RNA sequence: GGGAACGACUCGAGUAGAGUCGAAAAGCACGUAGGUUCAGAUGAUGGGCCCGCAUCUGUACGAAAGUAUGACGAAAGUGGAGCCUACGUGCAUGAGCACGCGGGCCCCGUGCUCUACUGCAAAAGACCAUAGCGACGCUUUCGAGCGUCGCUAUGGAAAAGAAACAACAACAACAAC
Reactivity to 2A3 in 0.01 (KOAc 150mM, MgCl2 10mM, bicine 150mM(pH8.5), 24C), signal-to-noise 2, nucleotides 027 to 126: g000c010a000c000g000u000a000g010g000u000u010c000a020g000a120u040g000a020u060g020g010g000c000c000c000g010c000a000u000c000u020g010u020a030c000g050a040a040a050g020u020a010u080g100a040c050g140a230a000a010g110u130g090g010a000g000c000c000u010a000c000g000u000g000c000a020u020g000a000g000c000a000c000g020c010g000g020g010c000c020c000c000g000u000g000c000u000c000u030a070c040u060g180c060a120a050a030a070g030a060